[RMDB]
This 207-nucleotide RNA was probed chemically with 2A3.
The RNA was probed in 150 mM KOAc, 10 mM MgCl2 and 150 mM bicine (pH 8.5) at 24 C.
For 2A3 the reverse transcriptase was SuperScript II with manganese.

RNA sequence: GGGAACGACUCGAGUAGAGUCGAAAAGUAACCCAUGUGGGAGCAUCAAGGUGAUGGAACAUGGCUGUGUCUUAACAGGUUGGGCUGUAGGGUACAUUAUGCUGGCCUGCCCACUCCAAGUUGAGAGUUGGGCCAUGGGAUUUGGGCGAAGGCUCAGGGCUUAUUUUGAGUUCGCUCAAAAUAAGCCAAAAGAAACAACAACAACAAC
Reactivity to 2A3 in 0.01 (KOAc 150mM, MgCl2 10mM, bicine 150mM(pH8.5), 24C), signal-to-noise 1, nucleotides 027 to 156: g040u040a000a020c000c010c010a070u120g090u090g020g010g080a080g050c000a040u060c060a150a100g080g000u060g080a090u040g030g080a000a070c040a010u010g100g000c040u020g040u000g030u120c000u050u110a050a000c000a000g010g080u010u040g060g000g010c010u030g080u210a060g040g130g000u060a080c040a050u090u120a130u230g100c110u030g000g020c000c030u010g000c020c000c030a000c050u040c050c000a120a160g000u090u040g030a050g000a010g020u160u010g010g000g000c000c000a020u030g070g000g000a060u060u050u110g000g000g060c030g020a110a050g110g000c030u000c040a000g000